[RMDB]
RNA sequence: GGGAACGACUCGAGUAGAGUCGAAAAUCGCCCCGAAAUGAGGACUCCGGGGUCCCCUUCCGAAGGAACGGAGGGGGGUGACUAGGAAUCAGGAUCCAGUGGAUCCGUGGGAAUUAUCCCGUUCCACGUUAGUGAAAACGUUCGCGUUUUCACUAACAAAAGAAACAACAACAACAAC
Reactivity to 2A3 in 0.01 (KOAc 150mM, MgCl2 10mM, bicine 150mM(pH8.5), 24C), signal-to-noise 2, nucleotides 027 to 126: u090c040g050c010c000c010c000g080a060a060a100u130g030a080g060g030a010c040u000c020c010g050g030g050g010u030c000c000c000c000u010u000c010c000g130a190a170g190g090a210a110c010g010g010a000g000g000g010g000g010g000u010g000a010c030u050a080g010g030a020a020u030c010a030g000g020a000u000c010c010a090g170u140g110g000a010u010c020c020g030u040g030g010g010a030a040u130u050a080u100c020c000c000g020u040u040c000c010a070c040
Reactivity to DMS in 0.01 (KOAc 150mM, MgCl2 10mM, bicine 150mM(pH8.5), 24C), signal-to-noise 1, nucleotides 027 to 126: u020c130g010c020c000c010c020g000a020a090a130u000g010a090g000g000a110c040u000c000c020g000g010g000g000u000c000c000c050c000u000u000c010c000g030a260a180g020g000a110a210c010g000g010a030g020g020g020g000g010g010u010g000a010c080u000a130g000g000a000a080u000c050a180g000g000a020u000c000c000a190g030u030g030g000a000u010c000c000g080u000g020g010g010a100a060u000u020a100u000c000c010c020g010u000u010c000c020a100c290
The record gives the reactivity of an RNA of 177 nucleotides to 2A3 and DMS. 2A3 adducts were read by reverse transcription with SuperScript II with manganese.